[RMDB]
RNA sequence: GGGAACGACUCGAGUAGAGUCGAAAAAGUGCUGCGCGAGACUCUAGGCCCGUGACUGUCACGGACAAAUUCCGUGACCGUGUUAGGCCGGCAUUGAAGAGCGUACCUAGCUGCGUUUCAACUUGCGUGGGUUGGGGCGGCUUAGCGGAUUAAGGCGGUAUAUUCGAUGCUUCGGCAUCGAAUAUACAAAAGAAACAACAACAACAAC
Reactivity to DMS in 0.01 (KOAc 150mM, MgCl2 10mM, bicine 150mM(pH8.5), 24C), signal-to-noise 1, nucleotides 027 to 156: a090g020u010g010c020u000g000c070g020c150g030a230g020a060c000u000c060u020a170g010g030c000c000c030g020u010g000a070c030u000g000u030c020a030c030g020g110a020c050a060a080a180u000u000c010c020g020u010g000a000c000c060g000u000g020u020u000a090g000g010c000c000g000g000c110a170u000u000g020a190a100g030a120g010c040g000u030a050c030c010u000a160g050c000u000g010c010g010u010u000u010c020a100a090c100u000u000g010c270g030u010g010g020g010u020u000g000g040g010g040c000g000g000c030u020u000a070g000c050g030g010a140u000u000a090a160g000g030c050g030
Reactivity to 2A3 in 0.01 (KOAc 150mM, MgCl2 10mM, bicine 150mM(pH8.5), 24C), signal-to-noise 2, nucleotides 027 to 156: a000g140u090g000c030u030g000c030g010c020g040a040g050a100c050u000c030u100a070g020g010c040c000c040g140u100g110a030c010u010g000u000c010a000c000g060g000a060c120a070a220a080u280u020c010c010g000u010g010a020c000c000g010u050g050u050u080a010g000g000c000c000g040g000c030a050u020u210g080a090a050g030a000g050c000g000u020a070c000c060u020a020g000c080u030g000c020g030u010u060u140c050a050a040c020u060u130g040c050g050u190g020g020g030u030u010g000g000g020g030c020g010g000c040u000u060a000g020c010g030g010a040u060u120a040a020g060g020c000g000
An RNA of 207 nucleotides, treated with DMS and 2A3 and read out base by base. Reactivities are given for positions 27 through 156. For DMS, 2,565 sequencing reads were counted. For 2A3, 1,907 sequencing reads were counted.